[RMDB]
Record summary:
The record gives the reactivity of an RNA of 207 nucleotides to 2A3 and DMS. Source: RMDB library ARCHII, as collected in RNAgym. Values cover nucleotides 27 to 156.
RNA sequence: GGGAACGACUCGAGUAGAGUCGAAAAAGUCGGUGACCUUGCUAAGGUCUUGGCCAGCGCCGACUGGUGCCCGGUACGAAUCCUGGGGUUGUCGAUGUACUCGUGCGAGUAAUCCACGAUCGCUACACGGCAUUAAGCAAUGGAAGUGACCCUUGAGGUAGGUAUAAGGCUUCGGCCUUAUACCUACAAAAGAAACAACAACAACAAC
Reactivity to 2A3 in 0.01 (KOAc 150mM, MgCl2 10mM, bicine 150mM(pH8.5), 24C), signal-to-noise 1, nucleotides 027 to 156: a000g000u000c020g000g000u020g040a150c020c000u020u010g030c010u070a100a070g220g050u110c140u060u020g030g010c000c030a000g000c000g000c000c000g000a020c030u010g000g020u130g020c000c010c020g020g070u110a050c020g110a120a050u050c000c010u020g000g000g080g000u000u010g000u000c040g090a300u030g000u040a010c000u000c010g040u030g010c080g000a020g040u070a040a180u060c010c000a000c000g020a020u020c080g000c010u010a000c000a000c010g000g000c000a000u080u070a020a000g020c040a060a150u120g020g030a060a060g070u080g080a080c000c010c030u020u020g060a050g050
Reactivity to DMS in 0.01 (KOAc 150mM, MgCl2 10mM, bicine 150mM(pH8.5), 24C), signal-to-noise 1, nucleotides 027 to 156: a060g010u000c000g020g000u000g010a110c040c000u010u000g010c030u010a170a100g050g020u020c010u000u000g010g000c020c070a140g000c060g010c010c000g030a060c020u000g000g000u000g010c040c030c020g040g040u000a300c100g010a160a130u000c010c020u000g010g010g020g020u010u000g060u000c010g010a160u010g000u000a040c080u000c020g000u020g010c120g000a070g010u000a140a170u020c020c030a020c020g010a060u000c070g060c070u000a030c000a080c060g000g060c040a100u010u000a100a180g020c060a040a130u020g000g010a100a120g020u000g040a110c010c000c020u000u010g000a220g000